[RMDB]
RNA sequence: GGGAACGACUCGAGUAGAGUCGAAAACCACUGCUCGAGGACGUCCUCCCUGUCUCCUCGGUUCUUCUUCGAUCCGGACCGGCUCAUCUCGGCAAGAGGCGGCAGUCCUCAGUACUCUUACUCUUUCGGCGUUCAUCCUUCGGGAUGAACAAAAGAAACAACAACAACAAC
Reactivity to DMS in 0.01 (KOAc 150mM, MgCl2 10mM, bicine 150mM(pH8.5), 24C), signal-to-noise 5, nucleotides 027 to 129: c080c090a240c060u020g030c040u050c020g000a010g000g040a140c080g030u010c030c060u050c000c010c000u000g030u020c040u050c030c020u010c000g060g040u000u000c060u050u030c050u040u020c090g080a140u040c000c000g050g040a090c130c000g020g040c040u000c110a080u000c000u010c040g000g000c100a140a080g020a040g000g000c090g000g000c070a040g020u030c020c030u020c000a100g030u000a010c060u020c000u050u040a010c040u000c050u000u000u000c070g000g050c150
Reactivity to 2A3 in 0.01 (KOAc 150mM, MgCl2 10mM, bicine 150mM(pH8.5), 24C), signal-to-noise 9, nucleotides 027 to 129: c010c010a080c040u010g010c000u010c030g010a020g030g070a200c000g020u030c010c010u040c000c000c000u030g030u010c020u010c020c010u030c020g010g030u050u040c030u110u010c000u050u080c060g070a100u020c030c020g020g020a040c000c010g040g000c010u010c030a110u010c030u030c020g030g000c040a070a060g020a020g020g020c010g030g000c020a010g050u070c000c010u050c010a020g030u050a080c010u040c010u120u080a080c020u040c000u050u050u020c040g040g000c030